[RMDB]
RNA sequence: GGGAACGACUCGAGUAGAGUCGAAAAAAUUUAGAUUAUCCAGGUGUAGCGGUGAAAUUCGUAGACAUCUGGUGGAUAAUGAACCGGUGGCGAAGGCGAAAGAUAACCGCUGAAAUGCUGAAGUGAAGAGUAAGUUAGUAUUCGUACUAACUUACUCAAAAGAAACAACAACAACAAC
Reactivity to DMS in 0.01 (KOAc 150mM, MgCl2 10mM, bicine 150mM(pH8.5), 24C), signal-to-noise 7, nucleotides 027 to 126: a050a060u000u000u000a100g010a130u000u010a060u000c020c010a090g000g010u010g010u000a050g010c000g010g000u010g000a090a130a080u000u010c010g020u000a110g010a040c000a010u000c000u010g050g010u000g000g010a130u010a090a080u020g010a130a060c020c010g010g020u000g000g000c030g010a130a110g010g010c010g010a020a040a040g000a090u000a120a050c020c020g010c010u000g000a050a050a150u000g010c010u000g010a080a120g010u000g010a090a140
Reactivity to 2A3 in 0.01 (KOAc 150mM, MgCl2 10mM, bicine 150mM(pH8.5), 24C), signal-to-noise 4, nucleotides 027 to 126: a010a010u230u220u100a060g010a040u050u050a040u110c030c010a000g040g000u040g010u050a000g010c000g000g010u030g020a060a020a020u020u010c000g010u020a050g020a080c000a000u020c090u090g000g000u010g030g030a070u100a230a130u120g050a020a030c000c000g000g040u040g000g020c070g040a070a020g190g000c010g010a020a030a000g140a020u060a040a030c000c000g000c000u000g020a030a040a020u140g010c010u020g020a130a070g080u050g130a070a130
Source: RMDB library M2PK90, as collected in RNAgym.
An RNA of 177 nucleotides, treated with DMS and 2A3 and read out base by base.
The reactions ran in a buffer of 150 mM KOAc, 10 mM MgCl2 and 150 mM bicine (pH 8.5), at 24 C.
In probing experiments dimethyl sulfate is read out at A N1 and C N3, which are open when not base-paired.